[RMDB]
RNA sequence: GGGAACGACUCGAGUAGAGUCGAAAAGAUGAACAGAAACAUGAAAAAGGCGAUUUUGGCGAUCAGCCACACCAGCGGCCACGAGCUGAUGCCGGGAAUGAGCGGCUCUAGAAAGGUCGGCCCCCGGGCCGGUCCACGCAUUCGUGCGUGGACCGGCAAAAGAAACAACAACAACAAC
Reactivity to 2A3 in 0.01 (KOAc 150mM, MgCl2 10mM, bicine 150mM(pH8.5), 24C), signal-to-noise 1, nucleotides 027 to 126: g080a040u070g050a080a000c140a250g150a040a280a010c100a100u290g140a060a030a000a000a120g100g000c100g100a270u000u040u060u100g020g000c030g030a020u110c020a020g020c010c000a020c020a030c000c050a030g060c060g120g010c020c040a040c070g050a030g010c000u010g000a000u050g030c090c120g070g000g030a040a100u270g040a040g020c030g000g000c000u000c000u000a150g100a180a170a000g080g000u020c040g000g000c000c000c000c000c000g000g030
Overview
An RNA of 177 nucleotides, treated with 2A3 and read out base by base. The RNA was probed in 150 mM KOAc, 10 mM MgCl2 and 150 mM bicine (pH 8.5) at 24 C.